[RMDB]
RNA sequence: GGGAACGACUCGAGUAGAGUCGAAAAGAAAGGAUACGAAGGCCUAAGAGCACGAAGUACAGAGAUACGAAAGUAUCGAGGCCUAAUGUACUGAAAGAGUUGUGCUCAAGUAUCUACUCUGAAGAAAGGGAUAAUAAACCUUCGGGUUUAUUAUCCCAAAAGAAACAACAACAACAAC
Reactivity to DMS in 0.01 (KOAc 150mM, MgCl2 10mM, bicine 150mM(pH8.5), 24C), signal-to-noise 2, nucleotides 027 to 126: g010a000a110a300g000g000a000u020a010c020g010a110a060g000g010c020c040u030a150a100g000a020g010c000a000c000g030a060a010g000u000a010c000a030g000a200g010a010u000a000c010g020a130a090a130g000u000a000u000c000g000a150g030g000c040c020u000a130a110u000g000u010a000c000u020g000a110a110a090g010a080g010u040u000g000u000g000c010u000c010a050a090g000u000a000u000c000u000a110c230u000c010u010g020a160a090g000a100a130a110
Reactivity to 2A3 in 0.01 (KOAc 150mM, MgCl2 10mM, bicine 150mM(pH8.5), 24C), signal-to-noise 4, nucleotides 027 to 126: g040a010a060a000g050g000a020u030a040c030g040a130a030g050g020c010c020u080a120a050g000a000g000c000a010c000g090a050a010g000u000a000c000a000g040a000g000a010u000a000c010g080a120a040a030g000u000a000u010c010g030a090g000g000c000c000u020a070a010u030g000u000a000c030u080g160a130a170a050g110a080g080u130u140g000u020g000c000u000c010a000a010g000u000a010u000c000u010a020c020u010c000u080g110a130a090g050a150a120a040

Background
Chemical mapping of a 177-nucleotide RNA with DMS and 2A3. Values cover nucleotides 27 to 126. For DMS the reverse transcriptase was MarathonRT. For DMS, 5,559 sequencing reads were counted. The 2A3 profile rests on 2,870 reads.